The record gives the reactivity of an RNA of 207 nucleotides to 2A3 and DMS.

RNA sequence: GGGAACGACUCGAGUAGAGUCGAAAAGGGACUGGCCCGAUGAAGCCCGGCAACCUAACUUUAUUUAAGCGUAAAGUGAAGGUGCUAAUUCCAGCAAAAUGGUGUAUUCCGUUUUGGUAGAUAAGAAAAGCGUGACAUGAGUUCGCUCAUGUCACAACCAAACUAUCCCGUUCGCGGGAUAGUUUGGAAAAGAAACAACAACAACAAC
Reactivity to 2A3 in 0.01 (KOAc 150mM, MgCl2 10mM, bicine 150mM(pH8.5), 24C), signal-to-noise 3, nucleotides 027 to 156: g020g010g000a000c020u020g030g050c000c000c020g020a050u060g040a040a080g040c000c020c010g000g030c050a160a110c000c000u000a010a020c000u020u000u030a060u080u170u100a170a050g140c060g000u010a010a010a000g030u030g100a120a020g000g000u000g000c010u000a000a080u190u060c010c000a000g010c020a060a010a010a010u040g000g040u050g040u170a140u180u060c030c000g000u010u010u020u020g070g060u160a180g000a160u130a170a080g060a130a090a010a010g150c080g030u000g010a000c000a000u010g000a000g040u070u100c190g020c050u000c000a000u000g000u000c000a000c000a000a010
Reactivity to DMS in 0.01 (KOAc 150mM, MgCl2 10mM, bicine 150mM(pH8.5), 24C), signal-to-noise 1, nucleotides 027 to 156: g030g030g000a140c100u010g010g000c060c030c030g000a050u000g010a200a160g010c010c010c000g010g070c030a040a020c010c000u010a180a010c010u020u010u000a000u010u000u000a180a240g060c300g050u010a020a040a050g020u000g010a120a080g040g010u010g000c000u000a100a150u010u000c020c030a030g040c000a000a010a040a010u000g010g070u000g030u000a120u010u010c000c010g040u000u000u000u000g010g000u000a010g000a030u000a060a180g010a070a050a050a080g010c140g020u000g010a010c000a000u000g030a010g020u000u020c300g030c000u000c010a010u000g020u000c000a000c010a010a070
Background
The reactions ran in a buffer of 150 mM KOAc, 10 mM MgCl2 and 150 mM bicine (pH 8.5), at 24 C.